[RMDB]
RNA sequence: GGGAACGACUCGAGUAGAGUCGAAAAUCAGUGUUACAGAUUUCUUGAAGAAAGCUGUUUUUCUUAAGGAAGCACUGAAAUGUGAACAAAUAUCUAAUGAUGGUUUUAUAGUGUGUAAUACACAGAGUGCUCAUGCAUUAGAGGAAGCAAAGAAUGCACCCUACGUUAUAUUCGUAUAACGUAGGGUAAAAGAAACAACAACAACAAC
Reactivity to DMS in 0.01 (KOAc 150mM, MgCl2 10mM, bicine 150mM(pH8.5), 24C), signal-to-noise 2, nucleotides 027 to 156: u000c000a020g010u000g020u000u010a220c070a170g000a130u000u000u000c010u000u000g020a100a140g010a040a020a050g000c040u010g000u000u000u010u000u000c000u020u010a110a110g010g020a050a120g000c010a010c000u020g000a040a080a090u000g020u010g010a110a100c040a050a070a110u000a120u000c020u000a030a020u000g000a060u000g010g010u010u000u000u010a090u000a190g040u000g020u000g010u010a120a100u000a190c020a030c010a110g010a200g020u000g010c060u000c050a040u000g030c000a040u000u000a040g000a060g010g020a070a130g020c050a040a080a130g000a120a110u000g010c080
Reactivity to 2A3 in 0.01 (KOAc 150mM, MgCl2 10mM, bicine 150mM(pH8.5), 24C), signal-to-noise 5, nucleotides 027 to 156: u020c010a000g000u010g020u090u100a040c040a070g190a180u040u030u050c030u090u160g110a090a040g010a010a030a020g040c140u150g160u170u100u030u030u040c020u020u050a020a000g050g000a010a020g010c000a000c010u010g000a040a040a040u150g030u050g030a080a010c010a030a090a050u140a030u000c010u030a010a020u050g030a010u020g010g040u040u030u080u160a160u100a140g020u020g010u000g020u070a180a070u100a220c020a000c000a010g090a040g090u050g030c000u020c130a000u140g070c000a000u030u020a010g010a020g030g020a070a010g030c050a050a070a050g130a110a060u110g020c020

Chemical mapping of a 207-nucleotide RNA with DMS and 2A3.
The reactions ran in a buffer of 150 mM KOAc, 10 mM MgCl2 and 150 mM bicine (pH 8.5), at 24 C.
For DMS, 8,120 sequencing reads were counted.